Conditions: 150 mM KOAc, 10 mM MgCl2 and 150 mM bicine (pH 8.5), 24 C. An RNA of 177 nucleotides, treated with DMS and 2A3 and read out base by base. The data come from the RNA Mapping Database (RMDB), library OK2TST. For 2A3 the reverse transcriptase was SuperScript II with manganese.
RNA sequence: GGGAACGACUCGAGUAGAGUCGAAAAAAGGAGACAUUUCCUUUUCAGGCUUCGUUCGGUAUACACCUCGACGACCAACGGUUGGUCGACAAGUUCACAGUUUGGUGGCCUGCAAAUGAACCACCGAUCAUUUAGUGAGUUUCGACUCACUAAAUGAAAAAGAAACAACAACAACAAC
Reactivity to DMS in 0.01 (KOAc 150mM, MgCl2 10mM, bicine 150mM(pH8.5), 24C), signal-to-noise 7, nucleotides 027 to 126: a010a020g020g010a030g030a210c270a140u000u010u010c010c000u000u010u010u000c020a300g010g010c020u000u000c050g010u010u000c050g020g000u000a090u010a080c150a080c120c060u000c030g010a080c020g000a020c010c030a070a150c220g000g010u000u000g020g000u010c010g010a070c130a040a090g000u000u010c050a110c060a070g000u000u010u000g010g020u000g000g020c110c020u000g000c180a040a110a120u000g010a110a090c030c010a020c020c010g010a120
Reactivity to 2A3 in 0.01 (KOAc 150mM, MgCl2 10mM, bicine 150mM(pH8.5), 24C), signal-to-noise 7, nucleotides 027 to 126: a000a000g080g010a060g050a090c160a210u220u190u050c000c000u020u010u000u020c030a020g030g000c010u040u040c080g040u040u040c040g020g030u070a080u020a140c070a060c030c020u010c030g040a050c000g010a010c020c010a110a060c120g280g030u110u060g110g000u020c000g000a020c030a060a040g030u060u060c040a030c020a100g010u040u080u060g040g010u000g010g000c000c010u100g060c080a050a060a090u170g020a050a040c010c000a000c000c010g010a080